[RMDB]
RNA sequence: GGGAACGACUCGAGUAGAGUCGAAAAUAAAAGAGUGGGUGGUAGCACAAACCAGACCAAUGAUAAGUGCAUGGUCGCACAAGUACAGCUUCGCCUGUACAAAGCGAACAACAACAACAACAAAAAACGGUAUAAUAGGGUUCGCCCUAUUAUACCGAAAAGAAACAACAACAACAAC
Reactivity to DMS in 0.01 (KOAc 150mM, MgCl2 10mM, bicine 150mM(pH8.5), 24C), signal-to-noise 2, nucleotides 027 to 126: u000a050a090a090a110g000a100g080u000g000g000g010u000g000g000u010a100g020c030a030c050a040a050a090c060c030a080g030a170c050c040a070a040u020g020a100u010a030a100g010u000g000c070a110u010g010g000u000c010g010c020a040c100a090a170g040u010a010c010a020g000c040u000u010c250g000c230c000u010g020u000a010c020a050a090a110g000c000g000a010a090c020a010a040c010a020a010c050a030a080c080a040a020c020a030a070a090a030a050a050
Reactivity to 2A3 in 0.01 (KOAc 150mM, MgCl2 10mM, bicine 150mM(pH8.5), 24C), signal-to-noise 2, nucleotides 027 to 126: u060a000a080a010a030g110a030g050u130g030g060g020u040g000g030u070a030g080c000a010c020a060a080a000c010c020a020g080a070c000c030a040a080u120g080a050u080a200a050g000u030g030c030a030u030g080g000u000c000g000c010a080c020a120a120g020u000a010c010a000g010c020u120u230c110g030c050c010u020g000u020a020c030a040a050a020g000c000g030a010a000c000a000a000c010a000a000c000a000a000c000a080a000c020a060a030a030a020a000a020
Notes:
An RNA of 177 nucleotides, treated with DMS and 2A3 and read out base by base. The reactions ran in a buffer of 150 mM KOAc, 10 mM MgCl2 and 150 mM bicine (pH 8.5), at 24 C. For 2A3, 1,807 sequencing reads were counted. The data come from the RNA Mapping Database (RMDB), library M2PK90.